[RMDB]
RNA sequence: GGGAACGACUCGAGUAGAGUCGAAAAGGCGUCUUCGCUGCCUCGGCCGCCAUGCACUGACCGGUAGCCGCCGUAAUUGCGGCAUUGUUCCCAUAAACGGAUGUGGGUGUGGGUGACGAAGUAGCAGGACUACGUGAGUAUUCGUACUCACGUAGUCAAAAGAAACAACAACAACAAC
Reactivity to 2A3 in 0.01 (KOAc 150mM, MgCl2 10mM, bicine 150mM(pH8.5), 24C), signal-to-noise 4, nucleotides 027 to 126: g080g010c050g080u050c070u100u120c110g010c010u010g010c010c000u010c000g040g010c080c010g030c010c000a140u080g000c010a010c040u080g100a080c030c000g010g050u050a020g000c000c010g000c010c010g030u050a040a110u190u180g000c000g000g010c020a010u050u250g000u030u010c000c000c000a040u140a020a180a010c010g000g050a100u120g070u170g240g020g000u030g010u050g060g000g000u030g000a010c020g000a030a020g000u030a020g010c040a030g070
Reactivity to DMS in 0.01 (KOAc 150mM, MgCl2 10mM, bicine 150mM(pH8.5), 24C), signal-to-noise 4, nucleotides 027 to 126: g000g010c110g010u010c040u010u000c090g040c010u000g000c030c020u000c030g020g020c070c020g000c020c030a090u010g010c030a040c030u000g010a110c030c020g000g010u000a140g030c000c010g020c010c190g010u010a100a100u010u020g010c010g000g000c010a080u010u010g010u000u000c000c000c000a120u000a030a140a090c040g010g000a150u010g010u010g010g020g020u000g020u000g010g000g010u010g020a090c040g010a030a060g020u000a040g000c020a140g000
The data come from the RNA Mapping Database (RMDB), library OK2TRN.
The record gives the reactivity of an RNA of 177 nucleotides to 2A3 and DMS.
For 2A3 the reverse transcriptase was SuperScript II with manganese.
The reactions ran in a buffer of 150 mM KOAc, 10 mM MgCl2 and 150 mM bicine (pH 8.5), at 24 C.